[RMDB]
This 177-nucleotide RNA was probed chemically with DMS. DMS (dimethyl sulfate) methylates the pairing face of unpaired adenines and cytosines. Reactivities are given for positions 27 through 126. The DMS profile rests on 6,999 reads. The reactions ran in a buffer of 150 mM KOAc, 10 mM MgCl2 and 150 mM bicine (pH 8.5), at 24 C.
RNA sequence: GGGAACGACUCGAGUAGAGUCGAAAAGAUAUGGACACCGUGGAUGUUAGAGAAGAUCCGAUAAGAAGGUGUCGGAAACGACACACUUCUUUUGACGGAUCCUCUAACAUCCACGGUGUCCUAAGUCCAUAGUUCUACACUUCGGUGUAGAACUAUGAAAAGAAACAACAACAACAAC
Reactivity to DMS in 0.01 (KOAc 150mM, MgCl2 10mM, bicine 150mM(pH8.5), 24C), signal-to-noise 4, nucleotides 027 to 126: g000a100u010a300u000g010g020a010c010a010c000c000g050u000g000g010a020u010g010u000u000a010g000a000g000a220a120g010a010u000c000c010g010a210u010a030a010g000a010a010g010g020u000g010u000c000g010g000a090a070a200c000g000a010c000a010c000a210c000u000u000c000u000u000u010u000g020a230c110g000g000a020u000c000c000u000c000u010a000a010c010a000u000c000c000a000c000g000g000u000g000u000c000c000u000a010a090g000u000c050